[RMDB]
RNA sequence: GGGAACGACUCGAGUAGAGUCGAAAAUCCCAAAGGUUGGUGAAUCCGAAAGGUACGGAGGAACCGCUUUUUGGGGUUAAUCUGCAGUGAAGCUGCAGUAGGGAUACCUUCUGUCCCGCACCCGACAGCUAACUCCGGAACUAAUAAAGGAAGGAGAAUCAGUCAGGUGAUUCGUCACCUGACUGAUAAAAGAAACAACAACAACAAC
Reactivity to DMS in 0.01 (KOAc 150mM, MgCl2 10mM, bicine 150mM(pH8.5), 24C), signal-to-noise 1, nucleotides 027 to 156: u000c020c010c000a010a090a040g010g010u000u020g070g000u000g020a290a260u000c020c000g010a050a150a180g000g050u000a080c040g090g000a020g000g010a300a040c000c000g020c040u000u000u020u000u000g020g000g000g000u000u040a080a020u020c000u000g010c000a020g020u000g010a210a080g010c000u000g050c000a010g050u010a040g000g000g020a070u000a050c080c060u010u000c050u000g010u000c130c010c020g000c110a100c040c000c000g020a110c020a050g020c150u000a250a140c000u000c010c000g020g000a080a090c080u000a040a080u000a060a090a070g000g040a110a070g040g020a280g000a110
Reactivity to 2A3 in 0.01 (KOAc 150mM, MgCl2 10mM, bicine 150mM(pH8.5), 24C), signal-to-noise 2, nucleotides 027 to 156: u000c000c000c070a000a020a010g080g040u250u200g040g010u060g030a020a010u000c010c010g090a220a090a030g140g070u130a020c020g010g000a000g000g030a020a010c050c000g000c000u130u050u000u070u020g010g000g010g020u000u010a030a060u020c000u020g040c000a000g010u040g240a160a010g170c000u000g000c010a000g000u000a010g000g010g000a000u070a100c080c040u120u110c030u120g000u000c040c000c020g000c020a050c000c000c000g020a070c050a020g060c050u050a010a050c010u000c020c000g010g020a050a050c060u060a130a150u170a180a110a040g080g000a030a010g020g000a070g020a020
This 207-nucleotide RNA was probed chemically with DMS and 2A3. Reactivities are rounded to 0.1 and cut off at 0 and 3. The DMS profile rests on 1,309 reads.